[RMDB]
RNA sequence: GGGAACGACUCGAGUAGAGUCGAAAAGAAAGAAAGAAAAUUUCGGCUACCGGGAUACACCCUGUGCUCGCUUUGCAUUCGAAACUAGUGAACACAGCUGGUGGUAUCUCAGUGGCCCUGAUCCGAACCAUCAACGAGCAUUCGUGCUCGUUGAUGGAAAAGAAACAACAACAACAAC
Reactivity to 2A3 in 0.01 (KOAc 150mM, MgCl2 10mM, bicine 150mM(pH8.5), 24C), signal-to-noise 3, nucleotides 027 to 126: g090a010a010a010g130a050a080a010g130a020a220a060a010u120u160u130c020g000g000c000u020a020c000c010g000g000g000a000u000a010c010a000c000c000c010u000g000u010g000c010u010c020g000c020u170u220u040g050c070a190u130u300c180g090a060a030a030c000u010a000g000u000g000a000a000c000a000c010a000g050c080u160g000g020u060g020g070u000a000u000c000u010c000a000g000u000g010g000c000c000c000u060g050a050u000c010c040g010a020a020